[RMDB]
RNA sequence: GGGAACGACUCGAGUAGAGUCGAAAAUCGACAGCUCUGGGGAGAGAAGGGAGGAUCGGAUGGGAAGAGUAUAUCCUAUGGGAAUCCCCGUCCUCCCGUCACGUCCAGCCCCUCCCCGUGUCUAGUGCAAGUAUCAUCUUCGGAUGAUACAAAAGAAACAACAACAACAAC
Reactivity to DMS in 0.01 (KOAc 150mM, MgCl2 10mM, bicine 150mM(pH8.5), 24C), signal-to-noise 9, nucleotides 027 to 129: u040c090g000a050c130a030g020c070u040c020u060g060g000g030g010a070g020a100g030a100a120g000g000g010a160g040g010a020u040c140g000g000a070u040g000g010g010a040a090g000a160g030u030a100u050a030u000c040c000u020a110u080g020g010g010a070a120u030c020c010c010c030g000u010c010c000u010c020c000c020g020u020c000a090c130g010u040c020c020a050g010c020c010c000c010u010c010c020c010c000g000u000g020u020c030u010a100g030u020g020c130a080a070
Reactivity to 2A3 in 0.01 (KOAc 150mM, MgCl2 10mM, bicine 150mM(pH8.5), 24C), signal-to-noise 8, nucleotides 027 to 129: u120c010g030a000c010a010g010c020u040c060u240g000g010g010g010a050g000a020g030a120a210g030g010g000a020g010g000a060u170c080g030g010a040u070g030g000g010a080a050g050a030g100u050a040u030a050u180c030c030u090a150u170g080g000g040a050a090u110c020c000c010c000g020u030c000c010u000c010c000c000g000u000c000a010c020g050u010c010c020a050g030c000c000c000c000u000c000c000c000c000g000u010g020u020c040u050a090g030u020g100c040a120a040
Structure probing data (DMS and 2A3) for a 170-nucleotide construct. The RNA was probed in 150 mM KOAc, 10 mM MgCl2 and 150 mM bicine (pH 8.5) at 24 C. For DMS the reverse transcriptase was MarathonRT. For 2A3, 57,322 sequencing reads were counted.